[RMDB]
RNA sequence: GGGAACGACUCGAGUAGAGUCGAAAAAGUCUUAAUAUACACUGAGAAGAAUUGGUGAUGAUAUUGAAGUAGAUGAAUAUUUGUCCUUUGUAAGGGUAAAACUUGUUAUUUCUAGGCUUCGUGUCAGCUCAGAACAAAGAAAGACAAUGCAAUGUAACUGAUGCUAUUUAUUCGUAAAUAGCAUCAGAAAAGAAACAACAACAACAAC
Reactivity to DMS in 0.01 (KOAc 150mM, MgCl2 10mM, bicine 150mM(pH8.5), 24C), signal-to-noise 3, nucleotides 027 to 156: a130g000u010c020u000u000a070a100u000a140u000a150c090a120c050u010g000a090g020a120a160g000a130a150u000u000g010g040u010g010a080u000g010a040u000a040u000u000g030a050a060g030u000a080g020a110u000g000a060a070u000a100u030u000u000g000u000c000c030u000u000u000g020u000a200a060g010g020g020u000a010a020a050a080c120u000u010g010u000u000a080u000u000u000c050u000a150g020g020c030u000u000c040g010u000g030u000c050a080g020c020u000c020a070g010a040a110c070a060a080a080g000a090a060a060g000a050c050a040a110u000g020c060a100a080u010g000u000a080a210
Reactivity to 2A3 in 0.01 (KOAc 150mM, MgCl2 10mM, bicine 150mM(pH8.5), 24C), signal-to-noise 5, nucleotides 027 to 156: a000g030u010c020u060u060a120a040u060a020u050a110c030a010c050u030g010a010g020a130a050g030a110a080u140u110g060g020u110g080a060u020g010a000u010a040u070u280g020a020a010g010u040a010g010a090u070g020a040a010u030a080u070u070u050g040u040c000c000u040u050u100g140u230a060a080g010g000g000u050a040a050a040a040c070u100u110g070u130u070a090u060u130u030c020u020a050g180g020c010u010u030c020g020u010g010u010c020a010g000c020u010c010a010g040a070a010c040a050a070a030g120a090a050a010g020a010c000a030a010u080g040c020a040a050u100g030u070a070a030